[RMDB]
RNA sequence: GGGAACGACUCGAGUAGAGUCGAAAAAAGCAUCGGUGCCUUGGGAAGACGUGUCCUCGUGGGAGUGCGGUAGUCAAACUUCUCGCAAUAGUUCACGUUCAUCAACUUCCGACAACGCCGCCAAUGGCGGGCGCUGUUGUUUCGACAACAGCGCCCGAAAAGAAACAACAACAACAAC
Reactivity to 2A3 in 0.01 (KOAc 150mM, MgCl2 10mM, bicine 150mM(pH8.5), 24C), signal-to-noise 4, nucleotides 027 to 126: a000a000g100c060a070u090c020g030g020u080g020c060c050u070u110g020g040g020a000a030g040a010c020g000u000g030u010c000c020u030c020g060u050g000g030g000a070g000u050g010c060g030g120u150a110g130u130c070a060a020a070c020u100u090c080u120c040g060c020a030a170u060a170g050u010u020c000a000c000g030u060u040c020a090u120c020a030a060c010u050u040c020c010g040a050c030a090a020c030g030c020c010g020c020c000a080a150u110g090g000
Reactivity to DMS in 0.01 (KOAc 150mM, MgCl2 10mM, bicine 150mM(pH8.5), 24C), signal-to-noise 2, nucleotides 027 to 126: a080a050g000c140a100u000c040g020g000u050g020c120c120u000u010g000g000g000a020a040g030a030c030g000u000g000u000c020c030u010c300g050u030g010g010g010a050g000u000g020c300g000g020u030a090g000u050c040a000a270a120c060u050u010c010u030c000g000c040a120a060u050a070g010u020u000c040a030c000g020u020u140c160a160u010c190a010a110c080u030u010c010c010g000a190c010a040a200c070g000c000c000g010c040c110a010a110u040g040g000
Chemical mapping of a 177-nucleotide RNA with 2A3 and DMS. Conditions: 150 mM KOAc, 10 mM MgCl2 and 150 mM bicine (pH 8.5), 24 C. 2A3 adducts were read by reverse transcription with SuperScript II with manganese. Reactivities are given for positions 27 through 126. The 2A3 profile rests on 2,397 reads.